The record gives the reactivity of an RNA of 177 nucleotides to 2A3 and DMS. For DMS, 9,781 sequencing reads were counted. 2A3 adducts were read by reverse transcription with SuperScript II with manganese. The RNA was probed in 150 mM KOAc, 10 mM MgCl2 and 150 mM bicine (pH 8.5) at 24 C.
[RMDB]
RNA sequence: GGGAACGACUCGAGUAGAGUCGAAAAGAUAUGGAUCGCAGUCGCUUGGAUUUAUGGUACAGCACAACCUAUGUCGGAAACGACAUAGUAGCUGUACCAUUGUCAGCGAUACUGCGAUCCUAAGUCACAGUUUAUUAUUGUUCGCAAUAAUAAACUGAAAAGAAACAACAACAACAAC
Reactivity to 2A3 in 0.01 (KOAc 150mM, MgCl2 10mM, bicine 150mM(pH8.5), 24C), signal-to-noise 6, nucleotides 027 to 126: g050a030u090a030u280g000g010a010u000c000g000c010a010g070u030c030g060c180u230u300g280g010a170u300u300u180a010u090g000g010u000a010c000a000g020c010a060c080a300a140c040c000u000a000u000g000u000c000g040g040a080a090a110c010g000a000c000a000u000a000g020u010a010g010c000u000g000u010a000c000c000a000u000u000g010u000c000a010g000c000g000a010u020a020c000u000g000c010g010a000u000c000c000u000a010a000g020u000c020a000
Reactivity to DMS in 0.01 (KOAc 150mM, MgCl2 10mM, bicine 150mM(pH8.5), 24C), signal-to-noise 6, nucleotides 027 to 126: g010a070u010a300u000g010g010a010u000c000g010c000a020g010u000c000g000c000u000u020g020g010a020u000u020u000a000u010g010g010u000a010c000a010g010c000a120c280a120a170c300c010u000a000u000g010u000c000g020g000a150a100a230c000g000a010c010a000u000a000g010u010a080g010c000u000g010u000a000c000c000a010u000u000g000u000c000a040g010c000g000a100u000a040c020u000g010c000g010a010u000c000c000u000a010a070g010u000c030a300